Annotation:
Structure probing data (DMS and 2A3) for a 207-nucleotide construct. For DMS, 1,923 sequencing reads were counted. The 2A3 profile rests on 1,028 reads. For DMS the reverse transcriptase was MarathonRT. Conditions: 150 mM KOAc, 10 mM MgCl2 and 150 mM bicine (pH 8.5), 24 C. The data come from the RNA Mapping Database (RMDB), library M2RFPK.
RNA sequence: GGGAACGACUCGAGUAGAGUCGAAAAAGUUCGCGCUUCCGUGAAACGCGAAAAUCGGACGGUGGCUGCAAGUCGCAUCGCAAAACCGCGGCAAGUGCAGUUAGCGAGAGGAGGCUGGGUUUUGGCUAGAACACACGGUACUUCGGUACCGUGUGAAUCUAUCCUAGGCUUUCGAGCCUAGGAUAGAAAAAGAAACAACAACAACAAC
Reactivity to DMS in 0.01 (KOAc 150mM, MgCl2 10mM, bicine 150mM(pH8.5), 24C), signal-to-noise 1, nucleotides 027 to 156: a170g020u010u000c000g020c050g000c000u010u070c050c210g000u030g020a090a040a010c020g030c000g040a020a010a100a140u000c110g020g000a110c070g000g020u000g000g000c000u000g000c010a060a050g020u000c040g070c040a140u010c030g000c070a060a040a140a300c110c200g000c000g030g000c080a100a070g010u000g000c040a030g020u000u000a130g010c010g030a060g000a110g020g010a180g000g000c050u000g000g010g010u000u000u000u000g040g000c040u010a060g030a110a280c000a030c030a010c010g000g000u000a050c010u000u000c300g030g000u000a070c000c000g030u000g000u010g010a040a050
Reactivity to 2A3 in 0.01 (KOAc 150mM, MgCl2 10mM, bicine 150mM(pH8.5), 24C), signal-to-noise 1, nucleotides 027 to 156: a000g070u050u050c010g020c000g010c060u090u000c090c070g120u120g110a130a000a020c040g060c030g010a060a010a010a080u140c050g020g050a010c020g020g030u040g000g000c000u010g030c030a030a010g020u000c040g000c040a050u090c120g060c190a070a090a050a070c110c090g000c020g010g010c010a110a060g090u020g000c020a000g000u030u030a050g060c040g060a040g000a030g180g000a020g020g000c120u080g020g000g030u000u010u080u050g040g090c040u060a050g050a190a000c010a000c000a000c000g010g000u000a000c010u020u060c150g050g010u000a000c000c000g000u020g000u000g010a000a000